[RMDB]
RNA sequence: GGGAACGACUCGAGUAGAGUCGAAAAUAACGUGUUGCCUCCAGCUUUGUUCCUUUGGCUUAGGAUUAUCUUGGCAAUGUGGGCGCUUUUUUGUCGCCAUAUGAACUUUAAAGUAGUUUUUUCCAAUUCUGUGAAGAAAGUCAAUGGUAGCUUGAUAAAUCAGGAUUACUUUCGAGUAAUCCUGAUUAAAAGAAACAACAACAACAAC
Reactivity to DMS in 0.01 (KOAc 150mM, MgCl2 10mM, bicine 150mM(pH8.5), 24C), signal-to-noise 2, nucleotides 027 to 156: u010a090a110c040g020u000g020u000u000g010c030c020u000c030c030a110g020c040u020u000u010g000u000u010c000c020u000u000u010g000g010c070u000u010a070g030g000a100u000u000a030u000c020u000u010g020g010c050a100a110u000g030u000g000g080g050c030g020c020u000u000u010u000u020u010g020u010c010g030c000c010a040u000a020u000g010a100a070c010u000u000u010a070a040a110g030u000a040g010u000u000u010u000u000u000c020c030a050a140u010u000c070u000g030u000g030a040a050g000a030a030a040g010u010c050a040a120u000g000g010u000a090g020c020u010u000g000a160u000a030
Reactivity to 2A3 in 0.01 (KOAc 150mM, MgCl2 10mM, bicine 150mM(pH8.5), 24C), signal-to-noise 2, nucleotides 027 to 156: u080a000a050c030g020u030g040u050u060g030c000c010u000c000c000a000g000c030u070u050u110g060u080u060c010c000u050u060u050g070g000c000u020u050a000g000g000a100u110u050a080u140c040u040u060g000g050c000a010a080u140g010u070g030g090g010c000g020c030u090u090u070u060u180u140g130u220c020g000c010c000a010u010a060u060g020a020a010c000u000u080u160a110a130a030g060u040a060g040u050u020u010u000u100u000c030c000a060a090u090u000c030u060g070u080g070a040a130g060a000a080a000g020u040c020a010a030u020g010g030u030a050g020c000u020u050g000a030u080a070